[RMDB]
RNA sequence: GGGAACGACUCGAGUAGAGUCGAAAACACGAAUGUUGGCUAAUCCUGGUCGGACAUCAGGGGGUUAGUGCAAUGGCAUAAGCCAACUUGGCGCUAAUAGAUACUAAUCGUAGCAUAGCUGAAUAAACCCUGACCAUGGAUUCGUCCAUGGUCAGGGAAAAGAAACAACAACAACAAC
Reactivity to 2A3 in 0.01 (KOAc 150mM, MgCl2 10mM, bicine 150mM(pH8.5), 24C), signal-to-noise 2, nucleotides 027 to 126: c120a000c080g100a110a070u180g000u000u000g020g000c040u010a020a020u030c000c030u000g010g000u030c040g050g030a000c000a040u000c000a010g000g000g000g040g080u120u020a000g000u010g170c010a000a160u130g070g000c060a060u040a190a050g000c000c010a040a030c090u000u040g000g030c010g000c070u000a000a030u040a240g030a080u010a100c030u010a030a170u040c050g110u150a010g030c000a020u010a000g000c100u080g030a010a020u020a050a120a060
Reactivity to DMS in 0.01 (KOAc 150mM, MgCl2 10mM, bicine 150mM(pH8.5), 24C), signal-to-noise 1, nucleotides 027 to 126: c040a300c300g030a080a110u070g030u000u000g000g000c000u000a040a220u000c000c000u000g030g000u000c090g000g000a030c000a070u000c030a000g050g000g000g010g040u000u000a020g120u000g000c000a150a000u030g050g060c130a210u100a140a140g000c070c000a000a190c160u070u110g000g000c020g000c000u000a010a000u100a100g000a100u000a040c100u000a000a000u000c000g000u060a070g050c000a130u000a040g000c000u000g040a000a040u010a000a050a120
An RNA of 177 nucleotides, treated with 2A3 and DMS and read out base by base. The DMS profile rests on 1,028 reads. Values are in units of 0.01, from 0 to 300, in steps of 10. The reactions ran in a buffer of 150 mM KOAc, 10 mM MgCl2 and 150 mM bicine (pH 8.5), at 24 C. Reactivities are given for positions 27 through 126. For 2A3, 809 sequencing reads were counted.